[RMDB]
This 177-nucleotide RNA was probed chemically with DMS and 2A3. Conditions: 150 mM KOAc, 10 mM MgCl2 and 150 mM bicine (pH 8.5), 24 C. The data come from the RNA Mapping Database (RMDB), library TTRDES. For 2A3 the reverse transcriptase was SuperScript II with manganese. DMS adducts were read by reverse transcription with MarathonRT. The DMS profile rests on 2,436 reads.

RNA sequence: GGGAACGACUCGAGUAGAGUCGAAAAAAAAAAAAGAUAUGGAUCGGUUGCUCGACGAUCUAUCGUAACAUCUGUUCGGAAACGAACAGUGGAUAGGGAGAGCUGCCGAUCCUAAGUCAAAAAAAAACGAUACGUAUACGUUCGCGUAUACGUAUCGAAAAGAAACAACAACAACAAC
Reactivity to DMS in 0.01 (KOAc 150mM, MgCl2 10mM, bicine 150mM(pH8.5), 24C), signal-to-noise 1, nucleotides 027 to 126: a010a000a000a070a100a090a040a090g000a010u000a030u010g000g000a010u000c000g000g010u000u000g010c000u000c000g030a070c280g000a060u020c000u000a000u000c000g010u000a010a010c220a020u000c000u000g010u000u000c000g030g000a020a010a020c000g020a000a000c000a000g030u000g010g000a010u000a020g000g030g000a010g010a010g010c000u000g000c000c010g000a000u000c000c000u000a000a050g000u000c010a000a000a000a010a020a090a100a110a210
Reactivity to 2A3 in 0.01 (KOAc 150mM, MgCl2 10mM, bicine 150mM(pH8.5), 24C), signal-to-noise 1, nucleotides 027 to 126: a000a000a000a020a020a030a110a050g010a000u060a020u060g000g000a000u010c000g040g000u020u050g000c000u090c040g300a300c010g000a140u010c010u000a010u030c000g030u020a040a000c010a130u200c010u000g000u000u000c000g000g000a010a000a040c000g020a000a000c000a010g010u020g030g000a000u010a010g000g010g020a020g010a010g000c020u010g000c020c020g020a020u010c000c000u000a010a000g000u020c010a000a000a000a020a070a040a040a090a070